RNA sequence: GGGAACGACUCGAGUAGAGUCGAAAACUUUGUGAAUAAAAGAGAUAUCUGAUCAUUUACCAAACUGCGCAGAUCUGGAAGUUCUACUGUGCAUGUGAAGCAUAAAUGGAGAACGAUGAAAUUGAAAGAUUAAAUGGUGGUUCGCCACCAUUUAAUCAAAAGAAACAACAACAACAAC
Reactivity to DMS in 0.01 (KOAc 150mM, MgCl2 10mM, bicine 150mM(pH8.5), 24C), signal-to-noise 4, nucleotides 027 to 126: c020u000u000u000g030u000g020a080a090u030a070a050a060a060g010a120g010a200u040a030u010c010u000g010a270u020c030a010u000u010u000a040c180c050a110a220a030c040u000g010c020g000c010a040g010a140u030c120u010g020g010a110a090g010u010u010c020u000a090c010u000g000u000g020c000a020u030g000u020g020a100a080g010c210a130u020a030a000a070u000g000g010a070g020a090a100c110g020a040u010g000a070a080a120u020u050g010a100a130a070
Reactivity to 2A3 in 0.01 (KOAc 150mM, MgCl2 10mM, bicine 150mM(pH8.5), 24C), signal-to-noise 5, nucleotides 027 to 126: c020u060u150u080g110u100g070a130a100u210a180a130a080a020g130a010g030a030u060a080u170c040u040g080a040u080c020a030u040u020u010a060c050c020a050a050a030c020u010g000c020g000c010a020g020a160u090c090u120g060g080a120a070g130u190u020c020u020a040c000u020g000u000g020c010a030u130g050u030g080a010a000g030c060a070u050a070a070a020u050g080g010a060g010a100a020c060g070a050u080g080a040a040a100u120u130g060a110a070a040